[RMDB]
RNA sequence: GGGAACGACUCGAGUAGAGUCGAAAAGAUAUGGAGCUCGAGGAUCAUGCGAACUCUCGUUAAGGACUAUUCUCUCGGAAACGAGAGAACGAAUCCUCAACGAGAGACAUGGGAGAGCUCCUAAGUCCAUACAGUACCACUUCGGUGGUACUGUAUGAAAAGAAACAACAACAACAAC
Reactivity to 2A3 in 0.01 (KOAc 150mM, MgCl2 10mM, bicine 150mM(pH8.5), 24C), signal-to-noise 3, nucleotides 027 to 126: g050a010u120a060u260g000g000a000g000c000u020c020g100a300g060g000a020u040c010a000u010g040c090g160a110a070c000u010c000u000c000g000u000u010a030a000g000g000a010c030u030a040u040u010c000u000c010u010c000g040g010a040a060a050c020g010a000g010a000g000a000a000c000g020a050a300u000c000c000u000c020a000a010c000g000a010g000a000g020a010c000a010u000g030g000g000a050g000a000g010c010u010c000c000u010a000a010g000u000c010
Reactivity to DMS in 0.01 (KOAc 150mM, MgCl2 10mM, bicine 150mM(pH8.5), 24C), signal-to-noise 5, nucleotides 027 to 126: g000a110u010a300u000g000g000a020g030c000u000c000g000a100g030g000a050u010c010a000u000g000c080g010a120a090c010u000c000u000c000g020u000u000a040a010g000g000a020c060u000a300u000u000c000u000c000u000c000g010g010a140a110a230c000g000a010g010a010g000a000a010c080g000a070a140u000c000c000u000c030a000a000c010g000a000g000a000g020a030c000a000u000g010g000g000a060g010a020g000c010u000c000c000u000a000a060g010u010c040